[RMDB]
RNA sequence: GGGAACGACUCGAGUAGAGUCGAAAAAGACUUAAAAACAAGCAUGUUUUCAAAUGGCACUAUGAGCUGCCAAUGAUGUAUCACCACCAUAUCUCAUUAUUCUCCAGUAAAUGUGAUAAUAAUGUCAUACAGUUCGUGGUUUCGACCACGAACUGUAAAAAGAAACAACAACAACAAC
Reactivity to 2A3 in 0.01 (KOAc 150mM, MgCl2 10mM, bicine 150mM(pH8.5), 24C), signal-to-noise 2, nucleotides 027 to 126: a010g060a020c000u030u000a000a300a100a070a000c090a030a000g150c030a000u180g080u000u000u030u010c050a230a270a150u030g000g000c000a000c000u110a160u300g070a000g010c150u000g000c000c000a000a020u130g000a020u000g060u060a110u110c130a090c020c000a040c000c000a000u000a060u110c030u000c000a010u020u000a040u040u000c000u090c030c000a000g000u180a070a300a250u060g060u070g050a000u000a000a000u030a000a070u130g090u070c000a040
An RNA of 177 nucleotides, treated with 2A3 and read out base by base. 2A3 adducts were read by reverse transcription with SuperScript II with manganese. Values are in units of 0.01, from 0 to 300, in steps of 10.